[RMDB]
RNA sequence: GGGAACGACUCGAGUAGAGUCGAAAAUUUUCGUACCAGUGCGUUCCUCCAAACCACCACGCUCACGUUGAUGCGAAGUUGGUCUGAAGGAGUUCAUUGGUACACAAAUCAUAAGAGCAUGGAGGACGACAAGAUUCUUGUUCGCAAGAAUCUUGUCAAAAGAAACAACAACAACAAC
Reactivity to 2A3 in 0.01 (KOAc 150mM, MgCl2 10mM, bicine 150mM(pH8.5), 24C), signal-to-noise 3, nucleotides 027 to 126: u010u020u040u110c040g000u000a000c000c000a000g010u000g000c010g020u010u000c010c000u000c000c000a000a000a010c000c000a010c030c000a050c010g000c000u000c010a120c160g160u110u260g040a050u160g010c000g020a070a010g020u080u020g000g000u000c000u000g000a010a000g020g010a010g010u020u010c000a000u010u000g010g000u010a000c000a010c000a000a060a010u090c050a030u070a260a040g030a010g100c040a030u090g040g050a050g050g060a030c060
Reactivity to DMS in 0.01 (KOAc 150mM, MgCl2 10mM, bicine 150mM(pH8.5), 24C), signal-to-noise 2, nucleotides 027 to 126: u000u000u010u000c170g000u000a000c020c000a020g020u020g000c090g010u010u000c000c000u010c060c040a010a000a000c010c000a010c000c080a190c070g030c010u010c020a130c300g030u040u010g000a050u030g000c000g010a090a070g040u000u020g050g010u000c050u000g000a010a000g000g000a020g010u000u010c010a010u000u000g000g000u010a000c000a090c190a080a060a050u010c090a110u000a060a060g000a080g010c080a030u000g010g020a080g030g010a150c240